[RMDB]
Chemical mapping of a 207-nucleotide RNA with 2A3. The 2A3 profile rests on 486 reads.
RNA sequence: GGGAACGACUCGAGUAGAGUCGAAAAUGUCUGAUCUCAGGCAAGUUAUUUAAUUUUUCCAAGCUUCAUUUUCCUUACCUGUACAAUGGGAGGAAAGUAAGAACAAAAAUUAAAUGCAUGAAAGUACUUAGAUCAAUACCUGUUACCUAUUACCUAGGCUAUUGCCAUGGUUCGCCAUGGCAAUAGCAAAAGAAACAACAACAACAAC
Reactivity to 2A3 in 0.01 (KOAc 150mM, MgCl2 10mM, bicine 150mM(pH8.5), 24C), signal-to-noise 1, nucleotides 027 to 156: u110g030u000c030u020g000a010u000c030u000c020a010g000g000c030a070a100g020u120u080a070u020u000u000a000a000u000u000u010u040u000c110c100a130a030g060c030u000u080c060a020u000u000u000u110c000c000u130u060a300c020c000u060g030u140a150c100a100a210u040g020g000g000a000g010g000a010a010a000g010u010a020a030g010a030a010c030a040a000a010a010a000u060u040a010a020a020u020g010c010a050u110g090a080a200a090g030u100a200c000u000u000a000g010a030u010c010a040a040u070a060c010c030u040g090u230u080a050c010c010u100a110u240u170a080c090c080u090a050g000

It was measured as part of the RMDB library OK3TST.